[RMDB]
RNA sequence: GGGAACGACUCGAGUAGAGUCGAAAAAAAAGGAUGAUGAAGGAAAACCAAUCGGUCCAGAUGGACAGGUGCUUCCGACCGAUGCUUCUGGAAACUACAUCUACCCAGUUAUUGGACUAGAUGGACAGCAACCGAAUCAGUUCGCUGAUUCGGUUGCAAAAGAAACAACAACAACAAC
Reactivity to DMS in 0.01 (KOAc 150mM, MgCl2 10mM, bicine 150mM(pH8.5), 24C), signal-to-noise 1, nucleotides 027 to 126: a100a040a040a050g010g020a030u010g000a150u000g000a110a120g010g000a000a080a100a120c080c040a090a070u010c120g000g000u000c050c050a120g000a020u010g020g000a040c010a130g040g000u000g000c160u000u000c030c110g000a070c020c040g010a030u000g010c020u000u000c020u010g010g010a070a090a170c180u030a140c030a000u020c000u000a030c100c000c020a030g030u010u020a150u010u000g000g010a080c230u000a000g000a000u000g000g050a140c140a070